[RMDB]
Conditions: 150 mM KOAc, 10 mM MgCl2 and 150 mM bicine (pH 8.5), 24 C.
An RNA of 177 nucleotides, treated with 2A3 and DMS and read out base by base.
For 2A3, 4,149 sequencing reads were counted.
For 2A3 the reverse transcriptase was SuperScript II with manganese.
The data come from the RNA Mapping Database (RMDB), libraries RFM100 and RFMREP.
Values are in units of 0.01, from 0 to 300, in steps of 10.
RNA sequence: GGGAACGACUCGAGUAGAGUCGAAAACCCUGGUGAAUCAGUGAUGCUAAGCGCCCUGAAGCCGCCUUCGAACCUUCGGGUUCUCCGGUGUGUGGAUGCGCGUGAACCGAUCUGGUAGUAGCCAAGCAAGUGUCUACGUGUUCGCACGUAGACACUUAAAAGAAACAACAACAACAAC
Reactivity to 2A3 in 0.01 (KOAc 150mM, MgCl2 10mM, bicine 150mM(pH8.5), 24C), signal-to-noise 2, nucleotides 027 to 126: c000c000c000u000g000g000u030g030a020a000u080c000a010g010u010g010a000u010g020c010u000a010a010g010c000g000c010c080c000u020g000a000a010g000c010c010g000c010c000u010u050c020g000a000a000c000c000u020u100c210g050g000g000u010u020c000u020c000c020g020g020u020g060u100g000u010g010g000a000u000g010c000g000c000g010u000g000a000a010c000c000g010a010u000c000u000g000g000u000a000g000u000a000g000c000c000a000a010g080c060
Reactivity to DMS in 0.01 (KOAc 150mM, MgCl2 10mM, bicine 150mM(pH8.5), 24C), signal-to-noise 2, nucleotides 027 to 126: c000c000c000u000g020g000u000g030a300a060u050c020a000g010u000g000a300u070g020c000u000a060a300g000c000g020c000c020c010u000g030a300a260g000c000c000g000c000c060u010u040c260g010a000a000c010c000u020u000c080g030g030g010u000u000c000u020c300c080g000g010u000g000u050g000u000g000g000a140u000g090c300g000c000g000u020g000a080a060c300c000g010a210u020c020u000g020g000u000a010g000u010a300g000c000c000a010a090g000c240